[RMDB]
RNA sequence: GGGAACGACUCGAGUAGAGUCGAAAAACAGCGAAAGGCACAAGACUUCGAACAUUAUAGCAGUUAGUAGUUGCCUAAACCCAUUGCAAUAUAUGGGAAAGUAGAGGUCGCAAGCCUAUACUGUGCGAAAAGUCGCAAGGUUUCGACCUUGCGACAACUUCUCUUGAAGAUUCGUCUUCAAGAGAAGAAAAGAAACAACAACAACAAC
Reactivity to DMS in 0.01 (KOAc 150mM, MgCl2 10mM, bicine 150mM(pH8.5), 24C), signal-to-noise 3, nucleotides 027 to 156: a060c020a040g020c050g040a110a080a060g020g060c000a080c110a110a110g000a040c020u010u010c020g000a100a160c050a100u000u000a130u000a110g010c030a080g030u000u010a260g020u010a140g010u000u000g000c000c030u000a040a070a150c000c000c000a030u000u000g010c090a180a190u000a110u000a000u000g010g030g000a040a070a090g040u000a100g000a060g040g020u000c040g040c190a100a160g030c000c000u010a090u000a010c040u000g020u000g000c050g000a080a080a070a130g010u000c000g040c000a000a010g000g020u000u000u010c280g040a070c000c010u000u000g010c000g000a010c000a000a080
Reactivity to 2A3 in 0.01 (KOAc 150mM, MgCl2 10mM, bicine 150mM(pH8.5), 24C), signal-to-noise 6, nucleotides 027 to 156: a000c020a000g010c040g110a280a050a030g020g000c020a040c050a070a030g010a010c000u010u000c020g030a060a020c030a140u160u170a140u190a080g010c030a010g020u050u150a060g050u150a030g030u110u040g010c010c000u060a100a070a070c000c000c000a000u010u020g000c010a030a000u010a010u010a010u210g010g000g000a050a000a000g010u010a010g010a000g020g000u010c010g010c080a030a020g000c000c010u000a000u040a000c010u010g010u030g020c010g050a070a090a020a060g010u000c000g000c010a000a000g010g020u040u080u190c180g060a070c000c000u000u000g000c000g000a000c000a000a000